[RMDB]
RNA sequence: GGGAACGACUCGAGUAGAGUCGAAAAUUGCUUCCGUCCUCCUUUCUCACUGUAGAGAAACAGGAAGGGAUUUUAUUAAUAAGAAUGACUGGGGUCACACUUAAAACAACAUCAGAUUUUGAUCUCUCCAUGACAUUCUUUUCGAAGAAUGUCAUGGAAAAGAAACAACAACAACAAC
Reactivity to DMS in 0.01 (KOAc 150mM, MgCl2 10mM, bicine 150mM(pH8.5), 24C), signal-to-noise 1, nucleotides 027 to 126: u000u000g000c060u000u000c000c010g000u000c000c030u010c000c070u020u000u000c000u000c050a270c230u120g000u200a060g000a000g000a000a000a000c300a000g000g000a070a000g000g050g010a030u000u000u070u000a000u030u030a210a000u000a080a200g030a140a000u070g000a140c010u000g010g010g000g060u030c090a120c070a060c050u000u000a000a000a020a060c300a060a030c130a120u020c140a070g000a240u050u070u000u000g060a060u000c030u000c130u000
Reactivity to 2A3 in 0.01 (KOAc 150mM, MgCl2 10mM, bicine 150mM(pH8.5), 24C), signal-to-noise 6, nucleotides 027 to 126: u090u100g070c010u060u030c010c000g010u030c000c020u050c010c000u030u030u030c020u000c010a090c090u230g100u280a030g040a010g030a060a050a040c110a030g000g010a020a050g050g000g000a000u010u080u020u040a120u020u120a090a170u100a080a050g100a040a060u080g040a050c030u040g050g010g060g040u020c000a030c000a000c030u080u080a060a160a090a020c060a040a080c020a080u140c030a070g090a300u040u030u070u140g080a100u000c010u000c000u000
An RNA of 177 nucleotides, treated with DMS and 2A3 and read out base by base.
Source: RMDB libraries RFM100 and RFMREP, as collected in RNAgym.
The DMS profile rests on 805 reads.
The reactions ran in a buffer of 150 mM KOAc, 10 mM MgCl2 and 150 mM bicine (pH 8.5), at 24 C.
For DMS the reverse transcriptase was MarathonRT.
In probing experiments dimethyl sulfate is read out at A N1 and C N3, which are open when not base-paired.